[RMDB]
RNA sequence: GGGAACGACUCGAGUAGAGUCGAAAAACCGCCUGUAAACGCCUUCCCCGAAUAAUUUCGGGCAGUCCUUGCCCGCGGAGGGCACUUAAGGCUCCGGGGCCCGGGGCAGAGUCGGCCCUCCCAGAGCCUUUCUUUAUAAAUUCGUUUAUAAAGAAAGAAAAGAAACAACAACAACAAC
Reactivity to DMS in 0.01 (KOAc 150mM, MgCl2 10mM, bicine 150mM(pH8.5), 24C), signal-to-noise 3, nucleotides 027 to 126: a070c050c060g010c020c040u020g000u050a050a080a120c100g000c040c020u020u000c030c000c030c040g020a140a070u040a080a090u010u010u030c030g000g020g010c040a030g020u040c110c050u040u000g000c010c000c000g020c300g010g000a040g000g010g000c010a040c040u010u010a110a070g000g000c020u000c020c030g020g020g010g020c220c050c080g020g000g010g040c050a080g000a070g000u020c210g000g020c000c000c000u000c000c000c100a110g000a070g010c100
Reactivity to 2A3 in 0.01 (KOAc 150mM, MgCl2 10mM, bicine 150mM(pH8.5), 24C), signal-to-noise 2, nucleotides 027 to 126: a010c030c010g010c020c020u120g080u140a080a110a030c050g020c000c010u020u000c000c030c000c000g050a100a050u170a130a090u090u180u210c030g000g010g010c000a010g040u130c010c030u060u040g000c000c020c010g000c030g000g010a000g010g010g000c010a010c010u030u070a110a010g090g000c000u000c010c020g080g020g120g100c080c080c010g000g000g000g000c040a020g000a030g140u100c140g120g020c000c000c000u010c000c000c000a030g030a060g000c000

An RNA of 177 nucleotides, treated with DMS and 2A3 and read out base by base. The DMS profile rests on 3,677 reads. DMS (dimethyl sulfate) methylates the pairing face of unpaired adenines and cytosines. The RNA was probed in 150 mM KOAc, 10 mM MgCl2 and 150 mM bicine (pH 8.5) at 24 C. Source: RMDB library RFM100, as collected in RNAgym.